[RMDB]
RNA sequence: GGGAACGACUCGAGUAGAGUCGAAAAGAUAUGGACGCUGCAACGCGACGAUCUACUAGUCGGAAACGACUAGGUAGGGAGCGUACAGCGUCCUAAGUCAAAAGAUCACAGGUUCGCCUGUGAUCAACCACGAAUCAAGGUUCGCCUUGAUUCGUGGAAAAGAAACAACAACAACAAC
Reactivity to DMS in 0.01 (KOAc 150mM, MgCl2 10mM, bicine 150mM(pH8.5), 24C), signal-to-noise 1, nucleotides 027 to 126: g020a030u000a000u010g000g000a020c020g020c000u000g010c060a050a020c010g020c010g010a030c250g010a020u030c000u000a000c000u000a000g020u010c000g030g000a000a010a010c000g020a000c000u010a020g010g010u000a010g000g000g030a010g030c010g030u000a110c000a000g010c000g050u010c010c000u000a010a080g000u010c000a130a130a170a140g000a000u010c000a010c010a010g000g010u000u020c300g030c010c000u000g000u000g010a010u000c000a080a110
Reactivity to 2A3 in 0.01 (KOAc 150mM, MgCl2 10mM, bicine 150mM(pH8.5), 24C), signal-to-noise 2, nucleotides 027 to 126: g000a000u000a010u070g000g010a000c010g000c010u040g000c100a240a000c010g050c040g290a300c050g000a040u020c000u010a000c010u000a000g010u000c000g020g030a010a000a000c000g000a010c010u010a020g060g010u010a010g010g010g010a030g000c010g000u010a020c000a000g000c030g000u000c000c000u000a000a000g000u010c000a010a010a010a070g020a000u000c010a000c030a010g010g110u110u160c300g180c130c000u000g000u000g000a000u010c000a000a010